An RNA of 177 nucleotides, treated with DMS and 2A3 and read out base by base.
For 2A3, 3,025 sequencing reads were counted.
Values cover nucleotides 27 to 126.
For DMS, 6,416 sequencing reads were counted.
The RNA was probed in 150 mM KOAc, 10 mM MgCl2 and 150 mM bicine (pH 8.5) at 24 C.
Source: RMDB library M2PK90, as collected in RNAgym.
For DMS the reverse transcriptase was MarathonRT.

RNA sequence: GGGAACGACUCGAGUAGAGUCGAAAAAAUAAGAGUUUGGAUUAACCUAUAGGGAAUUAGCCAUCAAGAAUACAACCUAAGGACCUGGUUGACUUAAUUAUUCCAUAGGUUGGUGGAAGCUAGCGAAGUAUUGUCUACUAUUCGUAGUAGACAAUACAAAAGAAACAACAACAACAAC
Reactivity to DMS in 0.01 (KOAc 150mM, MgCl2 10mM, bicine 150mM(pH8.5), 24C), signal-to-noise 5, nucleotides 027 to 126: a080a070u010a090a080g000a050g010u000u000u010g010g020a070u000u000a060a030c010c010u000a030u000a190g020g000g000a060a030u010u000a040g010c030c030a040u000c040a030a040g010a100a090u000a100c080a040a070c080c090u010a090a080g010g000a140c230c100u000g000g010u000u000g000a060c020u000u000a020a050u000u010a070u010u000c000c000a040u000a010g010g010u000u000g000g020u000g000g010a040a080g010c050u000a050g010c110g010a080a110
Reactivity to 2A3 in 0.01 (KOAc 150mM, MgCl2 10mM, bicine 150mM(pH8.5), 24C), signal-to-noise 3, nucleotides 027 to 126: a010a020u290a050a050g030a040g020u020u030u060g120g010a020u030u030a020a020c000c010u030a020u060a160g030g000g060a040a020u050u040a040g060c020c020a050u060c040a060a020g040a100a030u140a110c030a030a010c020c030u070a090a070g170g020a060c010c040u060g000g030u000u000g020a010c010u020u030a020a020u100u070a040u060u030c000c000a000u010a020g040g020u000u030g000g010u040g080g050a000a010g010c030u050a030g080c020g080a140a020